[RMDB]
RNA sequence: GGGAACGACUCGAGUAGAGUCGAAAAACGUGCUCGUACCUACCGCCUCCCUCAACAGGCCCUACCUAAGAUGUAAUUCCACAGAAGAGAGGGAAGUGAACAGUCACCGCAACCUGACGUUGCGAGCGAGGCGGCAGACUUUCGAGUCUGCCGCCUCAAAAGAAACAACAACAACAAC
Reactivity to 2A3 in 0.01 (KOAc 150mM, MgCl2 10mM, bicine 150mM(pH8.5), 24C), signal-to-noise 1, nucleotides 027 to 126: a000c140g070u270g000c000u000c000g000u000a250c000c000u000a050c030c030g000c000c070u140c000c000c000u300c000a240a300c070a070g030g030c000c000c000u150a170c000c000u120a080a080g070a000u150g070u080a290a150u130u210c000c070a100c010a080g000a300a000g190a000g050a000g100g020g000a140a080g000u000g140a000a020c080a000g080u050c000a000c050c050g050c000a000a120c040c050u000g100a050c240g020u120u000g000c000g000a000g000c000
Chemical mapping of a 177-nucleotide RNA with 2A3.
The data come from the RNA Mapping Database (RMDB), library OK1LIB.
The reactions ran in a buffer of 150 mM KOAc, 10 mM MgCl2 and 150 mM bicine (pH 8.5), at 24 C.
Reactivities are given for positions 27 through 126.
For 2A3 the reverse transcriptase was SuperScript II with manganese.